About this RNA: The record gives the reactivity of an RNA of 207 nucleotides to 2A3 and DMS. For DMS the reverse transcriptase was MarathonRT.
RNA sequence: GGGAACGACUCGAGUAGAGUCGAAAACUUGUAACCCGAGUGGGGGCAACAAUGUGGUGGAAUGUUGGGUCCAUCUUGAUGGAUGGGCUUGAAGGGCUAAUGUUCUGGCCUGCCCUGUCCAAGCACAGAGUUGGGUCAAGUGGUCUAUACGAAAGUAGAUUAAUGAUUUCUUCGGAAAUCAUUAAUCAAAAGAAACAACAACAACAAC
Reactivity to 2A3 in 0.01 (KOAc 150mM, MgCl2 10mM, bicine 150mM(pH8.5), 24C), signal-to-noise 4, nucleotides 027 to 156: c020u020u030g030u100a080a100c020c000c040g030a070g090u130g010g040g000g040g000c010a040a000c020a060a140u110g030u060g030g060u040g020g060a070a080u070g060u040u070g040g020g000u010c010c000a020u010c020u090u160g130a150u230g040g000a000u010g010g000g000c000u000u020g020a020a020g020g000g000c030u060a080a070u120g050u140u110c080u070g060g010c010c000u010g000c010c000c000u020g030u010c050c050a090a020g060c030a040c010a050g070a000g040u070u160g060g000g030u030c010a040a020g000u010g040g020u020c030u080a120u020a100c040g070a110a040a020g070u110a020
Reactivity to DMS in 0.01 (KOAc 150mM, MgCl2 10mM, bicine 150mM(pH8.5), 24C), signal-to-noise 2, nucleotides 027 to 156: c040u000u000g020u010a100a100c030c010c020g020a110g040u000g010g020g030g040g020c070a050a050c050a070a080u010g020u000g000g030u000g010g000a080a070u010g020u000u000g010g030g010u010c010c020a010u000c020u000u000g000a250u000g010g030a050u000g020g010g020c010u000u010g020a060a110g020g000g010c010u000a070a100u000g010u000u010c060u000g010g000c010c020u000g010c000c010c010u000g000u010c020c020a090a180g000c020a040c030a020g010a030g010u010u000g070g000g000u010c020a040a150g010u000g010g020u000c030u010a130u000a100c100g000a070a070a080g000u010a110